RNA sequence: GGGAACGACUCGAGUAGAGUCGAAAAGGCAAGGAAAGGUGCUCAUGCUAGACACUUACUAAUUUGUAAUGAAAUGAACCUUAUUUGAGCUUUGCAAAAACACGCUACAUUACAAAGGAAGAAUGUAAGCAACGUAGAAUUUCGAUUCUACGUUGCUAAAAGAAACAACAACAACAAC
Reactivity to DMS in 0.01 (KOAc 150mM, MgCl2 10mM, bicine 150mM(pH8.5), 24C), signal-to-noise 3, nucleotides 027 to 126: g000g000c030a030a090g000g040a040a050a060g020g040u000g000c170u010c020a050u010g000c080u000a100g010a150c080a080c110u000u000a060c050u040a100a160u010u010u000g000u010a010a030u000g000a050a100a080u010g000a040a060c020c050u000u000a170u000u000u000g000a150g010c060u000u000u000g010c110a010a060a070a090a090c170a060c250g010c100u020a100c030a000u000u010a040c050a020a050a070g020g000a070a090g020a060a060u000g010u000a050
Reactivity to 2A3 in 0.01 (KOAc 150mM, MgCl2 10mM, bicine 150mM(pH8.5), 24C), signal-to-noise 2, nucleotides 027 to 126: g020g010c020a000a030g080g010a170a050a000g060g000u040g000c020u030c020a030u120g000c000u090a070g040a070c020a020c040u100u120a020c010u060a070a210u080u040u020g010u000a030a020u080g030a160a060a010u100g020a060a040c010c000u110u070a220u080u090u070g010a030g000c000u070u080u070g020c040a140a020a000a000a000c060a000c080g000c020u070a020c000a000u030u030a010c000a030a030a030g020g020a100a000g060a030a020u090g020u060a040
Overview: The record gives the reactivity of an RNA of 177 nucleotides to DMS and 2A3. For 2A3, 1,480 sequencing reads were counted. Source: RMDB library OK2TRN, as collected in RNAgym. Reactivities are given for positions 27 through 126. The reactions ran in a buffer of 150 mM KOAc, 10 mM MgCl2 and 150 mM bicine (pH 8.5), at 24 C. Values are in units of 0.01, from 0 to 300, in steps of 10. The DMS profile rests on 1,540 reads.